RNA sequence: GGGAACGACUCGAGUAGAGUCGAAAAGAUAUGGAAGGAAGAAGACAUGCUGUCUCGGAAACGAGCAGCAACAGCUUCCCUUCCUAAGUCAAACCUAGUUUAGCUCCUUCGGGAGCUAAACUAGGAACGUAAUUAUACUCUUCGGAGUAUAAUUACGAAAAGAAACAACAACAACAAC
Reactivity to 2A3 in 0.01 (KOAc 150mM, MgCl2 10mM, bicine 150mM(pH8.5), 24C), signal-to-noise 6, nucleotides 027 to 126: g010a010u050a020u110g010g020a010a010g040g020a070a300g010a020a000g050a120c060a130u040g000c000u030g100u300c010u000c040g000g000a040a050a030c010g000a000g010c000a000g010c010a000a010c020a000g020c000u010u000c020c000c000u000u020c000c000u010a090a000g010u020c040a060a030a090c000c000u010a000g000u000u010u000a000g000c000u010c010c000u050u100c300g120g000g000a000g000c000u010a000a000a000c000u000a000g000g000a000a000
Reactivity to DMS in 0.01 (KOAc 150mM, MgCl2 10mM, bicine 150mM(pH8.5), 24C), signal-to-noise 6, nucleotides 027 to 126: g010a030u000a300u010g000g000a020a000g000g000a150a120g010a030a010g010a040c090a200u000g010c000u000g000u020c010u000c000g000g010a050a090a190c010g000a010g000c000a010g000c010a010a030c220a120g000c000u000u000c010c000c000u000u000c000c000u000a020a070g010u000c040a090a120a230c000c010u000a000g000u000u000u000a000g000c000u000c000c000u000u020c190g020g000g010a010g000c000u000a000a000a000c000u000a010g000g000a020a030

Chemical mapping of a 177-nucleotide RNA with 2A3 and DMS. Source: RMDB library TTRDEL, as collected in RNAgym. Conditions: 150 mM KOAc, 10 mM MgCl2 and 150 mM bicine (pH 8.5), 24 C.